Conditions: 150 mM KOAc, 10 mM MgCl2 and 150 mM bicine (pH 8.5), 24 C. Chemical mapping of a 177-nucleotide RNA with 2A3 and DMS.

[RMDB]
RNA sequence: GGGAACGACUCGAGUAGAGUCGAAAAGCCGGUCUGAGCGACUGCUCGGGCGCGGUGUCGGAUCUCGUGGAGCUGCUGACCAAGGGCCAGGCCACCGGCGAGCGUCUGUUUUCGACCGCCGAUGCGGUGUUCUAACCUCUUUCGAGAGGUUAGAACAAAAAGAAACAACAACAACAAC
Reactivity to 2A3 in 0.01 (KOAc 150mM, MgCl2 10mM, bicine 150mM(pH8.5), 24C), signal-to-noise 1, nucleotides 027 to 126: g050c020c010g010g000u020c020u010g020a000g030c070g300a300c170u300g010c010u000c000g010g030g000c130g010c000g050g010u070g100u040c050g000g060a110u040c020u010c060g100u130g000g000a010g040c040u080g020c020u070g110a100c010c020a070a140g010g000g000c040c030a010g050g050c000c040a090c090c000g030g010c010g030a020g010c080g070u000c030u030g160u040u070u150u100c020g020a030c000c030g000c010c030g060a070u170g010c030g050g070
Reactivity to DMS in 0.01 (KOAc 150mM, MgCl2 10mM, bicine 150mM(pH8.5), 24C), signal-to-noise 3, nucleotides 027 to 126: g010c020c020g020g000u000c010u000g000a040g030c000g010a180c290u010g000c000u000c010g010g000g020c010g030c010g020g010u010g000u000c050g010g010a090u000c010u000c040g040u010g020g010a150g030c050u010g010c070u000g010a070c040c070a070a120g000g010g020c030c060a060g000g000c050c050a040c050c030g010g000c030g000a070g010c150g030u010c060u010g010u000u000u010u000c070g000a080c020c010g020c010c100g010a060u000g010c060g010g020
For 2A3 the reverse transcriptase was SuperScript II with manganese. For DMS, 3,508 sequencing reads were counted. It was measured as part of the RMDB library OK2TRN. For DMS the reverse transcriptase was MarathonRT.